[RMDB]
This 207-nucleotide RNA was probed chemically with DMS and 2A3.
The DMS profile rests on 7,339 reads.
The data come from the RNA Mapping Database (RMDB), library OK3TST.
DMS adducts were read by reverse transcription with MarathonRT.
The reactions ran in a buffer of 150 mM KOAc, 10 mM MgCl2 and 150 mM bicine (pH 8.5), at 24 C.
Reactivities are given for positions 27 through 156.

RNA sequence: GGGAACGACUCGAGUAGAGUCGAAAACACGGGGCGGACCGCUCAACACUUGGUCCGUGGGUGGUUAAACCCGAAUGGAAGGGUUUAAUGAGGUGUACCACUCUUUGUUCUCUGCGUCUGUACAUCCCAGGGCGCCCGUUCCAGAGGGUAGUAAGGGGUAGAUAGUUUCAUUCGUGAGAUUGUCUACAAAAGAAACAACAACAACAAC
Reactivity to DMS in 0.01 (KOAc 150mM, MgCl2 10mM, bicine 150mM(pH8.5), 24C), signal-to-noise 2, nucleotides 027 to 156: c070a080c040g000g000g000g050c040g010g000a030c010c000g040c120u020c120a110a110c150a090c120u000u000g040g020u000c000c020g010u000g000g010g020u000g020g000u010u000a060a050a060c000c000c010g010a050a100u010g020g010a110a180g010g020g010u000u000u000a040a070u000g010a040g010g020u000g010u000a030c000c070a050c010u000c030u000u000u000g010u010u000c100u010c020u000g010c040g000u000c060u010g030u000a030c010a070u000c000c000c000a110g000g060g030c300g010c010c000c010g000u000u000c040c020a090g010a300g010g010g020u010a080g010u010a090a080g010g010g030
Reactivity to 2A3 in 0.01 (KOAc 150mM, MgCl2 10mM, bicine 150mM(pH8.5), 24C), signal-to-noise 2, nucleotides 027 to 156: c020a030c010g010g000g000g020c010g000g000a000c000c000g040c050u070c070a010a070c050a050c090u050u150g000g000u000c010c000g000u020g000g030g020u040g000g050u030u080a060a020a020c020c020c010g020a060a020u020g000g000a010a000g040g000g000u010u050u210a010a010u010g010a000g000g000u010g000u000a010c000c010a010c000u050c000u040u090u100g110u100u020c040u000c010u030g030c000g020u000c030u070g020u010a000c020a000u040c000c010c000a000g000g010g020c040g000c000c000c010g070u010u000c000c040a030g030a020g030g010g000u010a010g000u010a070a060g000g000g010